[RMDB]
RNA sequence: GGGAACGACUCGAGUAGAGUCGAAAAACGGUCGUACGCGACCGAGGCGCGGCUAGGUCGACGGACCGAACAAUGGCAUCCCGCAUUCUGCCAUCCGCCGCGCAGCCUCUUCUCAAACGGUGCGGAAAAAAGUAGGACACCUUCGGGUGUCCUACAAGUAAUACAAUGCGUUCGCGCAUUGUAUUACAAAAGAAACAACAACAACAAC
Reactivity to 2A3 in 0.01 (KOAc 150mM, MgCl2 10mM, bicine 150mM(pH8.5), 24C), signal-to-noise 4, nucleotides 027 to 156: a000c010g000g000u000c000g010u050a040c270g000c030g110a000c000c000g000a050g010g010c000g000c010g000g000c000u000a010g010g000u010c020g100a160c220g190g030a000c000c000g000a010a000c010a010a000u000g000g010c000a020u090c040c020c010g000c000a020u300u110c020u020g000c000c000a000u000c010c010g000c000c000g000c000g000c000a000g000c000c020u110c050u120u060c060u030c040a080a090a060c070g000g000u010g000c010g000g000a050a050a010a010a000a030g000u010a000g000g000a000c000a000c010c010u030u090c230g050g000g000u000g000u000c000c000u000a000c000a000a000
Reactivity to DMS in 0.01 (KOAc 150mM, MgCl2 10mM, bicine 150mM(pH8.5), 24C), signal-to-noise 1, nucleotides 027 to 156: a120c010g010g000u000c010g000u000a120c130g050c050g010a030c000c030g030a040g020g020c010g000c040g000g000c030u000a160g000g000u000c000g030a120c300g010g020a080c010c010g010a210a050c300a130a030u010g010g040c020a090u000c030c000c050g030c030a060u000u000c060u000g010c040c000a050u000c030c040g030c000c010g030c010g010c030a020g000c050c030u020c100u000u000c070u000c040a090a060a060c070g000g010u020g000c040g000g000a010a040a080a120a120a180g020u000a000g010g000a010c000a030c010c010u010u000c270g040g000g020u000g020u000c000c000u000a000c000a000a080